RNA sequence: GGGAACGACUCGAGUAGAGUCGAAAACGGUACUAUGAAUUGAUGCAAGGUGUGGAGCGACCUUCAACAGUUCUGGUGGUGCUCUGAAUGGAGUGCUCUACUGAGAUUAUAAAAUAGAAGGUAAGCUGAAGGGGAAAUGAGUUCGCUCAUUUCCCAACUCUUCAGAGGUCUUCGGACCUCUGAAGAGAAAAGAAACAACAACAACAAC
Reactivity to 2A3 in 0.01 (KOAc 150mM, MgCl2 10mM, bicine 150mM(pH8.5), 24C), signal-to-noise 3, nucleotides 027 to 156: c000g020g030u050a040c030u050a090u240g050a060a060u140u030g040a010u040g040c050a020a020g030g000u070g030u050g030g000a020g000c030g020a030c000c000u030u020c000a060a060c000a040g020u050u050c030u070g020g010u050g010g020u020g020c010u030c030u120g120a070a120u260g020g000a010g000u030g000c020u040c050u040a070c030u050g040a010g010a120u050u150a080u210a150a090a070a000u100a050g040a030a010g030g000u030a010a060g010c060u080g060a060a060g000g000g000g000a000a000a000u000g000a010g030u050u080c170g080c110u010c000a010u000u000u000c000c000c000a000a000